[RMDB]
RNA sequence: GGGAACGACUCGAGUAGAGUCGAAAAGGACGCCGUGUUUGGUGUGGGGACGAAACCACAUGCUUCCGGCCCGCUGUCAAGCGUACCACACGAUCGAGUGAGGGUGGACUCGACAGGUCCGCCAUACGCCGGUUGGGUCGUUCGCGAUCUAACCGGCAAAAGAAACAACAACAACAAC
Reactivity to DMS in 0.01 (KOAc 150mM, MgCl2 10mM, bicine 150mM(pH8.5), 24C), signal-to-noise 7, nucleotides 027 to 126: g000g000a060c070g000c030c030g010u020g010u030u010u010g010g020u010g000u010g010g010g000g000a140c200g010a140a080a120c020c020a030c030a020u010g010c030u000u000c050c010g000g000c000c050c050g000c020u000g000u020c060a040a050g020c030g010u010a080c010c020a050c030a040c020g010a080u040c140g000a110g010u010g000a130g000g000g030u010g020g000a060c000u010c060g000a070c140a080g010g000u010c000c010g000c020c030a070u030a030c150
Reactivity to 2A3 in 0.01 (KOAc 150mM, MgCl2 10mM, bicine 150mM(pH8.5), 24C), signal-to-noise 7, nucleotides 027 to 126: g050g010a030c070g010c020c010g090u090g070u120u090u110g070g000u020g010u030g010g020g010g070a130c100g110a080a030a010c020c000a000c000a010u090g140c010u050u010c010c000g010g000c000c010c020g030c010u010g040u070c030a040a020g000c010g040u060a040c000c010a010c000a000c040g080a170u170c060g030a060g080u070g030a160g000g000g050u040g020g010a090c000u010c040g030a010c020a010g000g010u000c000c000g000c000c000a030u030a020c040
Chemical mapping of a 177-nucleotide RNA with DMS and 2A3. The data come from the RNA Mapping Database (RMDB), library OK1LIB. For DMS the reverse transcriptase was MarathonRT.